Source: RMDB library OK2TRN, as collected in RNAgym. Structure probing data (2A3 and DMS) for a 177-nucleotide construct.
RNA sequence: GGGAACGACUCGAGUAGAGUCGAAAAGUGGUAGCAUGUGCCUGUAAUCCCAGCUACUCGGGAGGCUAAGGUAGGAGAAUCGCUUGAACUGGGGAGGCGGAGGUUGCAGUGAGCCGAGAUCACGCCAAUUCGAUAGAAUGUUCGCAUUCUAUCGAAUAAAAGAAACAACAACAACAAC
Reactivity to 2A3 in 0.01 (KOAc 150mM, MgCl2 10mM, bicine 150mM(pH8.5), 24C), signal-to-noise 3, nucleotides 027 to 126: g080u060g040g030u040a000g020c040a060u110g060u080g080c010c010u050g070u110a050a050u030c000c010c020a010g010c020u070a060c020u010c030g010g000g010a050g030g000c030u060a080a040g060g000u050a030g070g070a020g050a040a060u060c040g020c050u030u090g050a100a050c090u080g020g030g000g000a050g000g000c050g020g030a050g000g020u050u080g000c020a030g000u010g100a020g010c010c030g060a060g010a050u050c030a010c060g030c030c000a030
Reactivity to DMS in 0.01 (KOAc 150mM, MgCl2 10mM, bicine 150mM(pH8.5), 24C), signal-to-noise 9, nucleotides 027 to 126: g020u000g010g010u000a050g020c050a070u000g020u010g000c030c010u010g010u010a100a140u000c020c010c010a110g010c040u000a050c040u000c110g010g010g010a070g010g000c080u010a050a050g010g010u010a050g020g000a090g000a080a070u000c090g010c050u000u010g010a060a100c060u000g000g000g000g000a090g000g010c070g010g010a060g010g000u000u000g000c050a050g010u000g010a070g020c030c040g010a090g000a060u000c060a060c080g000c050c110a070
The reactions ran in a buffer of 150 mM KOAc, 10 mM MgCl2 and 150 mM bicine (pH 8.5), at 24 C. DMS adducts were read by reverse transcription with MarathonRT.